RNA sequence: GGGAACGACUCGAGUAGAGUCGAAAAGAGAUGCCGGAGACGAUGUUGCAGGUGGAUAGCAGGAAGAGGUUCACUCACGCAGUCGAGACGCCAGUGGUUAGAUUACCCCGGAAUGCACAGCGAGUGGUCGAAAAAGAUAUUUCGAUAUCUUUUUCGAAAAAGAAACAACAACAACAAC
Reactivity to DMS in 0.01 (KOAc 150mM, MgCl2 10mM, bicine 150mM(pH8.5), 24C), signal-to-noise 9, nucleotides 027 to 126: g010a120g010a080u000g010c030c020g000g010a110g010a110c090g000a060u000g000u010u000g010c060a060g010g020u000g010g010a060u010a080g010c050a070g010g010a100a080g010a080g000g010u000u000c060a060c030u010c050a090c130g010c060a060g010u000c040g000a100g010a110c100g010c040c040a040g020u010g010g010u000u000a070g010a110u010u000a130c050c010c010c040g010g000a070a050u010g010c040a060c060a080g010c070g010a070g020u000g010g010
Reactivity to 2A3 in 0.01 (KOAc 150mM, MgCl2 10mM, bicine 150mM(pH8.5), 24C), signal-to-noise 9, nucleotides 027 to 126: g050a000g010a020u100g020c030c010g040g020a050g010a030c050g020a040u060g030u160u090g010c040a020g020g030u030g020g030a050u060a050g040c060a020g060g040a050a050g050a060g080g010u050u050c030a020c030u050c010a050c060g010c020a020g020u060c020g030a030g020a040c040g020c010c000a020g030u050g050g030u050u040a050g010a210u060u160a090c010c000c000c010g020g050a080a030u120g020c030a020c020a060g030c030g040a040g060u080g040g060